[RMDB]
RNA sequence: GGGAACGACUCGAGUAGAGUCGAAAAGUCCAGGCCGAGGGGCCCACGGGCGCCGAUGCGCCACUGCGUGCCCAGAUGGACAAAUGCCUCCACAGUGGCUGCGUUCUCCGGCCAGAUGCUGAGCGGCUGCUAAACUGUGAUUCGUCACAGUUUAGCAAAAAGAAACAACAACAACAAC
Reactivity to DMS in 0.01 (KOAc 150mM, MgCl2 10mM, bicine 150mM(pH8.5), 24C), signal-to-noise 7, nucleotides 027 to 126: g010u000c010c020a080g010g010c020c030g000a180g010g000g000g010c010c020c020a030c170g000g010g000c020g030c010c300g010a110u010g010c020g000c000c010a040c050u010g020c070g010u010g010c010c000c010a190g000a110u000g010g000a020c020a050a160a090u010g000c020c010u000c060c120a110c180a110g000u000g010g000c000u000g000c160g000u000u000c030u010c060c010g010g000c000c000a120g000a060u000g010c050u000g010a100g010c080g000g010c080
Reactivity to 2A3 in 0.01 (KOAc 150mM, MgCl2 10mM, bicine 150mM(pH8.5), 24C), signal-to-noise 4, nucleotides 027 to 126: g010u030c000c010a010g000g030c020c010g050a060g020g020g010g030c000c000c000a030c080g050g010g000c010g000c040c110g190a110u300g000c000g010c010c010a050c050u070g030c070g120u180g010c020c010c010a040g060a150u120g000g000a000c000a000a230a010u130g030c030c010u070c060c020a140c030a080g060u050g070g000c010u020g010c030g000u020u020c030u010c040c000g020g000c000c010a010g030a040u080g020c030u030g040a030g080c050g010g010c030
Source information
The record gives the reactivity of an RNA of 177 nucleotides to DMS and 2A3. For 2A3, 4,943 sequencing reads were counted. For DMS, 9,385 sequencing reads were counted. The reactions ran in a buffer of 150 mM KOAc, 10 mM MgCl2 and 150 mM bicine (pH 8.5), at 24 C. The data come from the RNA Mapping Database (RMDB), library OK2TST.